[RMDB]
An RNA of 177 nucleotides, treated with 2A3 and DMS and read out base by base.
The reactions ran in a buffer of 150 mM KOAc, 10 mM MgCl2 and 150 mM bicine (pH 8.5), at 24 C.
For DMS, 2,048 sequencing reads were counted.

RNA sequence: GGGAACGACUCGAGUAGAGUCGAAAAAGGCGGCUUUGAUGGUCUGUUGGAGUUCAAAGGCGCGGUGAACGAUCCAGCGAUCCAGGGCGAUCAUGUCGCUCAGGGGCACGAGGUGUAGGGUGGGGUCAUAAUGGGGCACUUUCGAGUGCCCCAUUAUAAAAGAAACAACAACAACAAC
Reactivity to 2A3 in 0.01 (KOAc 150mM, MgCl2 10mM, bicine 150mM(pH8.5), 24C), signal-to-noise 1, nucleotides 027 to 126: a000g090g000c080g000g000c040u160u020u090g130a130u090g050g000u000c110u000g050u030u120g040g000a120g030u140u000c060a110a100a110g120g090c020g000c030g050g000u100g040a040a000c030g000a050u080c010c000a030g000c000g040a010u000c020c020a050g040g000g000c000g020a030u030c030a040u210g040u170c020g020c000u000c030a000g020g020g040g000c060a000c300g070a090g030g000u200g040u000a000g010g190g030u210g000g000g010g000u040c030
Reactivity to DMS in 0.01 (KOAc 150mM, MgCl2 10mM, bicine 150mM(pH8.5), 24C), signal-to-noise 1, nucleotides 027 to 126: a120g000g030c010g000g000c020u000u050u010g000a080u020g000g080u000c020u040g030u020u000g000g000a090g010u020u010c040a010a050a120g000g000c010g000c010g020g050u020g020a000a050c030g020a110u010c010c050a060g030c190g000a090u000c070c060a070g000g000g000c030g010a040u000c080a070u010g000u000c080g020c030u010c010a290g010g000g000g030c130a060c070g010a090g030g020u020g000u000a120g000g000g000u040g010g010g010g000u000c060